[RMDB]
RNA sequence: GGGAACGACUCGAGUAGAGUCGAAAAGAUAUGGACAAUCGUCAUUGAGUCCUGUUUCGGAAACGAAAUUGGACAAUGAUGUGACGAGUUGUCCUAAGUCAAACUAAUACAGUUCGCUGUAUUAGAAGUUAAAAGGCAGGUUCGCCUGCCUUUUAACAAAAGAAACAACAACAACAAC
Reactivity to DMS in 0.01 (KOAc 150mM, MgCl2 10mM, bicine 150mM(pH8.5), 24C), signal-to-noise 3, nucleotides 027 to 126: g000a010u000a000u010g000g000a030c010a010a050u000c000g010u000c000a010u010u000g010a300g010u000c000c000u030g010u010u000u000c000g030g000a000a000a020c000g020a000a010a010u010u000g000g000a010c000a030a000u000g000a030u010g000u000g000a010c000g020a040g020u010u000g000u000c000c000u000a000a110g010u000c000a160a130a300c020u000a000a010u000a000c000a030g010u000u010c300g020c000u000g000u000a000u000u010a010g000a080a090
Reactivity to 2A3 in 0.01 (KOAc 150mM, MgCl2 10mM, bicine 150mM(pH8.5), 24C), signal-to-noise 1, nucleotides 027 to 126: g000a000u000a000u040g000g000a000c010a000a030u010c020g000u010c010a000u000u090g060a000g020u010c010c000u010g010u010u030u000c000g000g000a000a000a000c000g020a000a010a020u020u000g000g020a010c010a020a060u300g230a070u250g010u020g010a000c000g000a020g150u010u010g000u000c000c000u000a010a020g000u000c000a000a100a000c010u020a000a000u000a010c000a020g040u060u130c250g080c180u000g000u010a020u000u010a010g020a100a010